[RMDB]
RNA sequence: GGGAACGACUCGAGUAGAGUCGAAAAAGUCACCUAUUACGAGAGGUGACAUUUGAACCAGCGAACAAUUCAGUUGCGAGAUUCGAGGUUUCAGUCUGAAUCAUAGUAGCCAUUACGAUGGCUACAACUCACUCCCGACUGUUCGCAGUCGGGAGAAGUCAUUCCAUAAGUUCGCUUAUGGAAUGACAAAAGAAACAACAACAACAAC
Reactivity to DMS in 0.01 (KOAc 150mM, MgCl2 10mM, bicine 150mM(pH8.5), 24C), signal-to-noise 2, nucleotides 027 to 156: a110g010u000c000a020c000c010u000a160u020u010a300c100g020a240g050a030g000g020u000g030a020c000a070u010u020u000g000a180a140c030c050a130g000c070g000a030a040c070a210a090u020u000c060a100g000u010u000g010c050g000a070g010a080u000u000c020g010a280g080g020u010u010u000c030a090g010u010c030u000g000a030a040u000c100a090u010a140g020u000a030g000c000c000a000u010u000a110c210g040a090u000g010g000c000u000a000c000a030a060c090u000c060a120c010u000c000c000c000g020a050c010u010g040u000u000c300g090c050a020g010u010c000g000g000g000a000g000a000a020
Reactivity to 2A3 in 0.01 (KOAc 150mM, MgCl2 10mM, bicine 150mM(pH8.5), 24C), signal-to-noise 8, nucleotides 027 to 156: a000g000u000c000a000c010c000u040a100u180u270a210c200g090a140g000a010g270g010u010g000a010c010a010u050u040u110g040a040a020c010c000a010g140c000g000a000a000c010a040a100u020u010c000a000g000u000u000g000c000g000a000g000a010u000u000c000g000a010g020g040u120u190u300c040a030g100u060c010u010g000a000a010u040c040a050u080a090g000u000a000g000c000c000a000u040u050a030c190g150a020u020g000g000c000u000a000c000a000a010c000u060c040a050c010u000c010c000c000g000a000c000u000g030u060u100c230g000c110a000g000u000c000g000g000g000a000g000a000a000
This 207-nucleotide RNA was probed chemically with DMS and 2A3. It was measured as part of the RMDB library M2RFPK. Conditions: 150 mM KOAc, 10 mM MgCl2 and 150 mM bicine (pH 8.5), 24 C.